Structure probing data (2A3) for a 177-nucleotide construct. Conditions: 150 mM KOAc, 10 mM MgCl2 and 150 mM bicine (pH 8.5), 24 C.
[RMDB]
RNA sequence: GGGAACGACUCGAGUAGAGUCGAAAAGAUAUGGACUUCCCAAGGGAGCCACUAUCGGAAACGAUAGAAUGGCAUCGAUCUUGGGAGUCCUAAGUCAAACCUUUUCGCAUCUUCGGAUGCGAAAAGGGCCCUCAUGAUGCUUCGGCAUCAUGAGGGCAAAAGAAACAACAACAACAAC
Reactivity to 2A3 in 0.01 (KOAc 150mM, MgCl2 10mM, bicine 150mM(pH8.5), 24C), signal-to-noise 1, nucleotides 027 to 126: g040a000u020a020u100g020g010a030c040u300u210c100c000c070a000a000g080g000g020a110g000c010c000a000c020u000a000u000c020g040g050a030a020a000c020g010a010u090a020g220a300a300u090g000g000c030a000u300c140g070a110u090c020u010u000g050g020g000a000g000u000c000c000u000a000a010g000u030c030a100a080a260c000c000u010u020u010u000c000g000c000a000u050c000u100u070c300g240g000a000u010g000c020g030a010a000a000a000g000g020